Structure probing data (DMS and 2A3) for a 177-nucleotide construct. The RNA was probed in 150 mM KOAc, 10 mM MgCl2 and 150 mM bicine (pH 8.5) at 24 C. For DMS, 928 sequencing reads were counted. For DMS the reverse transcriptase was MarathonRT.

[RMDB]
RNA sequence: GGGAACGACUCGAGUAGAGUCGAAAAGAUAUGGACGUCAUGAGGGAGCGACUGGUCGGAAACGACCACUCGCAUCGAUCUCAUACGUCCUAAGUCAAACGCCAGACUAGUUCGCUAGUCUGGCGAACCACUCAAUCUCGUUCGCGAGAUUGAGUGGAAAAGAAACAACAACAACAAC
Reactivity to DMS in 0.01 (KOAc 150mM, MgCl2 10mM, bicine 150mM(pH8.5), 24C), signal-to-noise 1, nucleotides 027 to 126: g000a000u010a030u040g000g000a000c000g020u000c300a010u000g040a040g010g050g010a180g020c000g000a010c190u000g000g020u000c010g010g000a010a010a070c010g030a020c010c000a000c060u000c000g020c010a230u000c300g000a120u000c010u000c000a010u010a030c010g010u000c000c000u000a000a050g000u000c000a130a150a120c010g010c000c010a000g000a010c000u010a010g000u000u000c300g030c000u010a020g010u000c000u010g000g020c000g000a010a030
Reactivity to 2A3 in 0.01 (KOAc 150mM, MgCl2 10mM, bicine 150mM(pH8.5), 24C), signal-to-noise 1, nucleotides 027 to 126: g020a010u020a000u010g000g000a000c030g010u080c250a060u020g000a010g070g150g110a300g000c020g000a020c000u000g010g000u000c010g000g010a030a010a000c000g000a010c010c000a000c000u010c000g000c000a020u300c130g050a230u000c000u000c000a010u010a000c010g000u000c000c000u000a000a000g000u010c010a110a100a130c000g000c000c000a000g000a000c010u010a000g050u050u100c300g000c240u000a000g020u040c010u010g000g020c000g000a000a000

Source: RMDB library TTRDES, as collected in RNAgym.